Record summary:
Conditions: 150 mM KOAc, 10 mM MgCl2 and 150 mM bicine (pH 8.5), 24 C. This 177-nucleotide RNA was probed chemically with DMS and 2A3. The 2A3 profile rests on 8,589 reads. For DMS, 4,473 sequencing reads were counted. The data come from the RNA Mapping Database (RMDB), library OK2TRN.
[RMDB]
RNA sequence: GGGAACGACUCGAGUAGAGUCGAAAAUGCGUACUGGCCAUGAUCUCUGAUCGUACGCACGUACAGGUACAGCGCGAUCGGCCGCUCGCACUACGUACGGCCAUAGCGCCAGGCCACGUACCGGCCAAUCGAGCAGUAAUUUCGAUUACUGCUCGAUAAAAGAAACAACAACAACAAC
Reactivity to DMS in 0.01 (KOAc 150mM, MgCl2 10mM, bicine 150mM(pH8.5), 24C), signal-to-noise 6, nucleotides 027 to 126: u000g000c010g010u000a010c000u010g040g020c000c020a180u010g000a060u000c030u000c180u000g010a020u000c030g020u000a010c030g000c030a080c300g010u010a020c060a080g000g010u010a050c070a300g000c010g020c000g000a080u000c270g020g000c000c000g010c060u000c030g020c150a130c220u000a070c040g030u010a040c020g010g000c010c000a030u000a110g010c000g020c010c030a130g010g010c010c000a070c110g030u000a040c040c040g010g000c020c000a150
Reactivity to 2A3 in 0.01 (KOAc 150mM, MgCl2 10mM, bicine 150mM(pH8.5), 24C), signal-to-noise 4, nucleotides 027 to 126: u080g000c000g000u020a030c050u150g020g000c010c010a050u130g030a060u040c190u010c120u270g050a050u040c020g000u010a000c000g020c010a010c030g010u020a050c010a040g030g010u040a100c010a020g000c010g000c000g010a070u080c050g010g000c030c000g010c050u040c020g100c020a070c160u260a060c070g050u030a010c020g000g000c000c010a010u040a030g020c010g000c000c010a050g040g000c000c020a020c080g000u000a020c010c050g000g020c000c000a000